Chemical mapping of a 177-nucleotide RNA with 2A3 and DMS. The reactions ran in a buffer of 150 mM KOAc, 10 mM MgCl2 and 150 mM bicine (pH 8.5), at 24 C. The 2A3 profile rests on 476 reads. Source: RMDB library RFM100, as collected in RNAgym. DMS adducts were read by reverse transcription with MarathonRT. The DMS profile rests on 1,045 reads. For 2A3 the reverse transcriptase was SuperScript II with manganese.
RNA sequence: GGGAACGACUCGAGUAGAGUCGAAAAUAGAACCAUGAGUAAUCAAUUCUUAUAGUGGAAAUGCCACCACUCAAAACAAGGCCGGUUCGGUUGAUUCGUCCAUGAGGACGAGGAUAAGGGUAGAACGCGUUUGGAUGAACUUCGGUUCAUCCAAACGAAAAGAAACAACAACAACAAC
Reactivity to 2A3 in 0.01 (KOAc 150mM, MgCl2 10mM, bicine 150mM(pH8.5), 24C), signal-to-noise 2, nucleotides 027 to 126: u100a000g060a000a000c000c000a040u050g030a020g040u190a030a070u010c000a050a300u020u000c080u070u300a260u090a060g030u020g000g060a120a080a120u040g000c020c030a040c000c000a010c070u230c220a000a000a000a080c070a020a020g000g000c090c090g060g000u000u020c010g000g060u050u030g050a090u000u000c000g000u000c000c080a250u300g090a020g130g030a000c030g050a000g000g000a000u010a060a150g000g000g200u180a020g000a010a070c040g000
Reactivity to DMS in 0.01 (KOAc 150mM, MgCl2 10mM, bicine 150mM(pH8.5), 24C), signal-to-noise 1, nucleotides 027 to 126: u000a040g000a010a050c010c060a180u040g000a170g000u060a060a020u000c080a100a180u000u010c070u000u000a070u020a130g000u000g000g000a050a090a150u000g000c080c140a070c000c040a030c000u020c300a040a040a000a060c120a100a020g000g020c000c090g000g000u020u000c040g000g000u000u000g000a150u050u000c000g000u000c000c040a080u090g000a130g030g050a000c000g010a000g000g000a040u000a040a140g000g000g000u030a090g010a070a080c110g000